[RMDB]
RNA sequence: GGGAACGACUCGAGUAGAGUCGAAAACAAAGAUGAACAGAGAACGUGCUGACUGCGCUCGUUUGGAAAGGCCUCAUGGCCAAAGGAGGAGAGGCAUUAUGAGGAGCAGUGACCGAGUGGGCAGGACCCCCGGGGAUCAGGAAAGGUGCACGGGGGACGAUGACUCCCGGUUCGCCGGGAGUCAUCGAAAAGAAACAACAACAACAAC
Reactivity to 2A3 in 0.01 (KOAc 150mM, MgCl2 10mM, bicine 150mM(pH8.5), 24C), signal-to-noise 2, nucleotides 027 to 156: c080a020a060a020g140a130u190g060a080a060c060a080g090a000g000a040a000c040g030u030g030c050u040g030a120c010u060g010c050g000c010u050c010g000u050u050u020g070g000a060a110a000g040g000c030c010u020c040a060u080g000g000c000c100a000a000a020g030g000a000g020g000a030g010a050g010g000c030a010u110u160a020u050g010a000g010g020a040g050c020a060g120u010g010a020c020c000g000a000g030u010g020g000g010c010a030g030g000a060c010c010c010c010c000g000g000g000g030a040u000c010a000g040g150a160a010a060g000g000u010g050c000a030c000g000g000g000g000g010a000
Description: Chemical mapping of a 207-nucleotide RNA with 2A3. The 2A3 profile rests on 888 reads. The RNA was probed in 150 mM KOAc, 10 mM MgCl2 and 150 mM bicine (pH 8.5) at 24 C. Values cover nucleotides 27 to 156.